[RMDB]
RNA sequence: GGGAACGACUCGAGUAGAGUCGAAAACCGAGUGAGUUCGCUCACUCGGAAAGAAGUGUGCGCUUACUGCUGCGACAGUAGCGACAAGAGCAGCAAGCAAAAAAACAAACCUGUUCGCAGGUUUGAACUAAAAUUGACGGUUCGCCGUCAAUUUUAGAAAAGAAACAACAACAACAAC
Reactivity to 2A3 in 0.01 (KOAc 150mM, MgCl2 10mM, bicine 150mM(pH8.5), 24C), signal-to-noise 1, nucleotides 027 to 126: c000c010g000a000g000u000g000a000g000u020u200c240g050c130u000c000a000c000u000c010g000g020a050a080a000g040a040a050g130u150g020u060g110c020g000c050u070u100a030c000u030g020c030u070g080c020g050a050c040a050g020u050a020g010c030g030a010c000a030a060g060a020g070c050a000g050c020a030a100g020c050a000a020a060a000a000a210a030c000a000a000a000c020c000u000g000u030u070c210g000c050a000g000g000u000u020u000g000a010a000
Reactivity to DMS in 0.01 (KOAc 150mM, MgCl2 10mM, bicine 150mM(pH8.5), 24C), signal-to-noise 2, nucleotides 027 to 126: c000c000g020a000g010u000g010a020g010u000u010c180g000c000u000c000a010c000u000c010g010g000a020a010a070g010a110a090g020u010g000u000g030c100g000c000u000u000a030c020u000g000c000u010g030c100g010a140c220a070g000u000a080g010c040g010a040c080a090a160g020a090g000c030a030g010c030a060a050g020c050a010a000a040a090a060a100a120c000a000a000a000c000c000u000g000u000u020c150g020c000a010g000g000u000u000u000g000a030a150

Structure probing data (2A3 and DMS) for a 177-nucleotide construct.
The reactions ran in a buffer of 150 mM KOAc, 10 mM MgCl2 and 150 mM bicine (pH 8.5), at 24 C.
DMS adducts were read by reverse transcription with MarathonRT.